[RMDB]
RNA sequence: GGGAACGACUCGAGUAGAGUCGAAAAAUUUGCUGAACCACAUCUAAAAAUCAUGGGUAUGGAAACUCAGCAGAGUUCAACACCAAAAGCAGUACAAGAAGCUCUCGAAGAAAGUAUUCGUCGUAUUCUUCAGGAAGGUGAAGAGUCUGUCCAAGAAAAAGAGUCCAAAAUUCGUUUUGGACUCUUUAAAAGAAACAACAACAACAAC
Reactivity to DMS in 0.01 (KOAc 150mM, MgCl2 10mM, bicine 150mM(pH8.5), 24C), signal-to-noise 1, nucleotides 027 to 156: a120u000u000u000g020c020u030g000a050a300c010c000a000c020a020u020c000u010a030a070a080a130a110u050c200a080u000g050g040g040u000a020u000g010g000a070a060a160c140u000c010a040g010c000a050g020a050g000u000u000c030a020a130c030a140c020c000a090a050a080a070g010c070a070g040u010a080c030a060a080g020a070a090g000c070u000c020u000c030g030a100a130g000a080a040a080g000u000a070u020u000c030g000u000c110g000u010a070u010u000c010u000u000c000a020g040g010a200a030g030g020u000g000a030a210g010a040g020u010c020u010g000u000c010c040a040a160g000a140a140
Reactivity to 2A3 in 0.01 (KOAc 150mM, MgCl2 10mM, bicine 150mM(pH8.5), 24C), signal-to-noise 1, nucleotides 027 to 156: a000u010u000u010g010c010u000g040a180a190c020c000a030c000a020u020c010u060a230a150a030a030a090u150c070a080u160g010g000g030u000a030u030g000g000a150a070a070c040u000c000a000g000c000a000g000a000g000u060u150c030a040a010c030a060c010c030a170a080a070a040g030c000a020g000u090a070c030a110a010g060a040a000g010c000u040c000u010c040g020a010a000g030a080a050a000g030u160a150u180u160c060g050u010c000g010u070a070u070u000c000u010u000c020a020g070g060a130a010g000g000u000g140a010a010g000a000g030u030c020u010g060u050c000c010a040a000g190a010a080